[RMDB]
About this RNA: Structure probing data (DMS and 2A3) for a 170-nucleotide construct. It was measured as part of the RMDB library 15KLIB. For 2A3, 2,112 sequencing reads were counted. For DMS, 2,893 sequencing reads were counted. For DMS the reverse transcriptase was MarathonRT.
RNA sequence: GGGAACGACUCGAGUAGAGUCGAAAACAUCCAGAGGACCCCUUCAGCGAACAGAAGACCCUGGUACCGGGGGGGAAUAGGCCAUAGUACGAGGGGAGAUGCUAGGAGUCGGGGGAAGCCAGAACGAGUACCGCGAGGUUCGCCUCGCGGAAAAGAAACAACAACAACAAC
Reactivity to DMS in 0.01 (KOAc 150mM, MgCl2 10mM, bicine 150mM(pH8.5), 24C), signal-to-noise 1, nucleotides 027 to 129: c150a070u000c070c030a060g030a200g070g050a110c020c040c020c070u050u050c040a060g010c130g040a070a080c120a060g000a090a010g000a170c070c050c050u030g000g140u090a080c000c000g020g050g000g000g000g060g040a050a020u080a020g030g040c090c050a180u050a210g080u030a070c020g020a030g100g010g050g010a050g020a040u030g090c020u060a020g040g000a020g060u110c070g000g000g000g000g000a030a050g010c110c040a020g000a110a070c170g070a050g050u020a110
Reactivity to 2A3 in 0.01 (KOAc 150mM, MgCl2 10mM, bicine 150mM(pH8.5), 24C), signal-to-noise 1, nucleotides 027 to 129: c000a080u080c030c020a010g000a050g030g050a060c050c000c010c000u060u070c030a000g050c000g010a020a000c000a020g060a040a070g000a060c000c000c000u030g010g020u040a030c000c050g010g000g000g040g000g010g000a020a040u080a010g000g060c020c030a020u020a060g080u080a030c040g010a030g050g000g060g000a000g010a020u090g020c000u020a000g000g000a000g040u000c000g020g000g000g000g000a000a000g030c000c000a010g030a020a030c030g010a050g050u100a040
In probing experiments dimethyl sulfate is read out at A N1 and C N3, which are open when not base-paired.